An RNA of 177 nucleotides, treated with DMS and 2A3 and read out base by base. The RNA was probed in 150 mM KOAc, 10 mM MgCl2 and 150 mM bicine (pH 8.5) at 24 C. It was measured as part of the RMDB library OK2TRN.

RNA sequence: GGGAACGACUCGAGUAGAGUCGAAAAAAUCAGAACUUGCCUUUUAACAAGAUCCUAGAUGAUUCACACGCACAUUCCAGUCUGAGAAGCUCUGAUCCGGAAGAGAUCAGGAGAUGUUCAAGUGCUGAGUAACCUGUACUUUCGAGUACAGGUUACUAAAAGAAACAACAACAACAAC
Reactivity to DMS in 0.01 (KOAc 150mM, MgCl2 10mM, bicine 150mM(pH8.5), 24C), signal-to-noise 3, nucleotides 027 to 126: a070a020u000c050a050g000a050a110c050u000u000g000c050c060u000u020u000u020a080a190c050a050a040g010a090u000c030c060u000a120g020a080u010g010a130u000u000c050a070c100a070c130g030c040a060c060a060u000u010c080c000a080g010u020c040u020g000a150g000a120a140g000c040u000c000u000g000a010u000c010c020g000g020a100a230g000a100g000a020u000c000a020g010g010a020g000a030u000g000u000u000c030a090a100g000u000g030c030u010g000
Reactivity to 2A3 in 0.01 (KOAc 150mM, MgCl2 10mM, bicine 150mM(pH8.5), 24C), signal-to-noise 2, nucleotides 027 to 126: a000a010u110c020a000g080a070a050c000u020u050g000c040c000u210u250u020u160a100a020c060a020a030g050a060u000c020c000u130a130g010a190u080g040a020u130u150c040a050c020a020c140g040c020a040c010a060u090u040c020c030a040g050u000c040u030g060a050g010a120a000g000c030u000c020u060g010a030u020c000c000g090g000a110a090g020a010g000a000u010c010a020g070g060a030g020a030u110g010u130u060c090a090a050g020u000g110c080u050g010